Source information: An RNA of 177 nucleotides, treated with DMS and read out base by base. DMS adducts were read by reverse transcription with MarathonRT. Conditions: 150 mM KOAc, 10 mM MgCl2 and 150 mM bicine (pH 8.5), 24 C. For DMS, 924 sequencing reads were counted.

RNA sequence: GGGAACGACUCGAGUAGAGUCGAAAAAUGGCACGAAGCGAUCGAAUGGCUGGAUAACGUAAGAGAGGUCAACCCAGAGCCCGUGAAAAGGCGAGCACACUGUCCGUACCGAGAUCCGACACAGGUAGUAGUCAUAAGUCUUCGGACUUAUGACUACAAAAGAAACAACAACAACAAC
Reactivity to DMS in 0.01 (KOAc 150mM, MgCl2 10mM, bicine 150mM(pH8.5), 24C), signal-to-noise 2, nucleotides 027 to 126: a070u000g020g040c060a100c120g010a090a070g020c060g040a070u020c050g000a100a090u010g010g030c040u000g020g000a100u010a040a040c110g020u010a110a070g020a120g030a080g000g010u010c040a120a060c060c060c030a040g000a190g030c020c030c050g030u010g020a070a100a090a150g000g000c020g020a150g020c070a130c100a120c040u020g010u010c030c030g000u000a130c070c010g010a070g020a110u020c020c020g010a090c070a090c120a060g010g010u000a090